Structure probing data (DMS and 2A3) for a 177-nucleotide construct. The reactions ran in a buffer of 150 mM KOAc, 10 mM MgCl2 and 150 mM bicine (pH 8.5), at 24 C. Values cover nucleotides 27 to 126.
RNA sequence: GGGAACGACUCGAGUAGAGUCGAAAAAGCUUGCGGUCGACUGUGCCGGUGACGCUGACGGCCGACCGCUCCGGGCUGGUGAUGGACUCCGGCGCCAAGGUCAUGAUGCGCGGUGUGCAGGUCGGCCUGCGCAGUGUUCUUUCGAGAACACUGCGCAAAAAGAAACAACAACAACAAC
Reactivity to DMS in 0.01 (KOAc 150mM, MgCl2 10mM, bicine 150mM(pH8.5), 24C), signal-to-noise 1, nucleotides 027 to 126: a130g010c050u030u010g030c140g030g000u000c000g020a030c030u000g010u000g000c030c000g000g020u000g010a100c030g000c030u010g000a300c300g000g000c020c000g000a070c290c190g010c000u000c020c000g000g010g020c050u000g050g050u030g020a140u000g010g000a060c020u010c000c000g020g000c130g030c000c010a110a140g000g000u010c030a020u010g000a100u010g060c000g040c030g020g010u000g010u050g020c030a220g030g000u000c010g000g000c030c000
Reactivity to 2A3 in 0.01 (KOAc 150mM, MgCl2 10mM, bicine 150mM(pH8.5), 24C), signal-to-noise 1, nucleotides 027 to 126: a010g090c120u130u160g050c060g050g020u010c000g000a040c030u090g070u110g200c060c010g300g190u080g030a040c010g020c000u030g010a010c000g000g030c000c000g000a030c000c030g000c000u010c000c000g000g010g060c070u040g100g160u200g140a170u250g060g030a020c000u040c080c000g030g020c030g000c000c000a050a010g000g020u000c030a110u160g040a070u080g010c010g000c000g140g300u100g000u040g000c000a030g000g000u010c000g000g000c000c020
It was measured as part of the RMDB library OK2TST.